This 207-nucleotide RNA was probed chemically with 2A3.

RNA sequence: GGGAACGACUCGAGUAGAGUCGAAAACCACCAAAACUGAAAACGGAAGGCAAUCCUUCCACGACGAUACUUACUUUCCUUUGAUCGUCGUUACUACUGGCAUAGCCACAAAGGAGAACAAACAUGAGCGCGGACACUGACUUCGGUCAGUGUCCAAGAGUUGAGCUAGGUUCGCCUAGCUCAACUCAAAAGAAACAACAACAACAAC
Reactivity to 2A3 in 0.01 (KOAc 150mM, MgCl2 10mM, bicine 150mM(pH8.5), 24C), signal-to-noise 2, nucleotides 027 to 156: c000c000a080c070c060a070a030a040a080c140u280g110a110a090a020a000c060g010g010a000a000g000g040c180a090a210u270c000c010u000u000c010c010a000c000g000a000c000g000a000u090a190c040u140u020a040c010u000u090u160c010c030u060u020u140g010a000u010c000g010u010c010g000u030u030a010c030u040a010c010u020g010g030c020a220u150a080g010c010c000a050c050a000a060a000g040g010a020g020a050a030c050a100a090a020c040a130u270g110a110g100c130g000c080g020g000a000c000a000c010u000g000a020c000u010u070c200g050g000u000c000a000g000u000g000u000c000c000a000a000
2A3 adducts were read by reverse transcription with SuperScript II with manganese. Reactivities are rounded to 0.1 and cut off at 0 and 3. For 2A3, 1,003 sequencing reads were counted. The data come from the RNA Mapping Database (RMDB), library M2RFPK.